[RMDB]
RNA sequence: GGGAACGACUCGAGUAGAGUCGAAAAGGAUUGACGGCCGUCGGGGGCGCGCUGGCCUGGCUGGCCGGGGAGACGGUGCAGCCGCUGGCCUACGCCGGGGUGUUCGUCAUGGUGAUCGCCGGCUGGCACCGCGAUGUAAUUUCGAUUACAUCGCGGUAAAAGAAACAACAACAACAAC
Reactivity to 2A3 in 0.01 (KOAc 150mM, MgCl2 10mM, bicine 150mM(pH8.5), 24C), signal-to-noise 3, nucleotides 027 to 126: g060g000a080u070u150g040a030c040g020g000c030c020g060u040c030g040g000g020g010g060c090g000c030g050c060u050g010g030c000c050u030g040g020c010u020g010g000c020c020g010g010g020g010a090g010a010c050g010g070u140g140c000a020g000c000c020g100c180u040g000g000c000c050u080a050c100g060c000c000g000g000g000g020u090g020u090u110c020g020u010c000a040u100g050g000u100g060a120u070c050g020c020c000g010g020c030u060g020g000c030
Reactivity to DMS in 0.01 (KOAc 150mM, MgCl2 10mM, bicine 150mM(pH8.5), 24C), signal-to-noise 2, nucleotides 027 to 126: g030g000a090u010u010g000a060c050g020g000c050c010g020u010c050g040g020g000g030g000c080g000c190g010c030u000g010g000c030c030u030g010g020c000u000g000g010c000c020g020g000g020g000a110g030a100c020g000g010u010g010c020a040g020c010c020g000c090u020g030g010c020c030u010a100c030g000c030c040g040g000g000g010u010g000u040u000c030g010u020c040a030u010g000g010u000g000a130u000c070g010c030c020g030g000c030u000g000g020c160